[RMDB]
RNA sequence: GGGAACGACUCGAGUAGAGUCGAAAAAAUAAAUGUUUGAUGCAAUGGCCCACUGCGAAGGAAUAUGCCUAUCAAGGAUUUAGAAUGAAUAUACCUGAUACAGUGCGACUACCUUUCCACUCAAUGGCUCUCUUUGCCGGUUCGCCGGCAAAGAGAGAAAAGAAACAACAACAACAAC
Reactivity to 2A3 in 0.01 (KOAc 150mM, MgCl2 10mM, bicine 150mM(pH8.5), 24C), signal-to-noise 1, nucleotides 027 to 126: a000a000u280a040a030a000u250g050u000u000u070g100a050u010g020c000a030a020u150g130g000c030c000c000a010c000u060g020c080g000a000a000g000g030a000a030u050a070u200g170c000c000u000a000u020c000a050a090g040g000a000u040u100u100a300g000a220a120u110g040a110a010u020a010u010a050c000c000u000g000a000u000a010c000a040g060u020g090c090g070a040c090u080a040c000c010u050u000u000c000c000a100c020u030c040a110a050u090g050g040